[RMDB]
RNA sequence: GGGAACGACUCGAGUAGAGUCGAAAACUCCUCCAUGUGGGGAGGGCCAGGGUGGGGAGGAAGCUGACAGCAGAACAUUAUAGAGAAGGAUGUGAGGCUAAGGAGAGUCCCGGGUGUUCAGAUGCCCUGGUUUCUCGUUUCCCAUGUGGCUAACCGACUACUACCUGCAUUUCGAUGCAGGUAGUAGAAAAGAAACAACAACAACAAC
Reactivity to 2A3 in 0.01 (KOAc 150mM, MgCl2 10mM, bicine 150mM(pH8.5), 24C), signal-to-noise 1, nucleotides 027 to 156: c020u000c000c000u040c010c020a100u050g000u120g060g040g060g000a100g010g000g000c060c030a120g030g020g100u170g030g010g000g000a070g010g040a090a020g050c120u080g000a050c090a090g000c010a000g060a070a110c060a070u100u160a090u260a190g090a010g090a120a060g040g040a030u010g010u030g070a060g040g000c010u080a140a050g080g000a010g060a000g020u010c020c040c000g010g000g010u040g050u030u100c070a030g020a250u090g030c000c000c000u090g000g000u000u090u030c000u000c000g060u000u060u000c010c000c040a020u060g000u060g020g010c010u020a020a120c030c030g040a000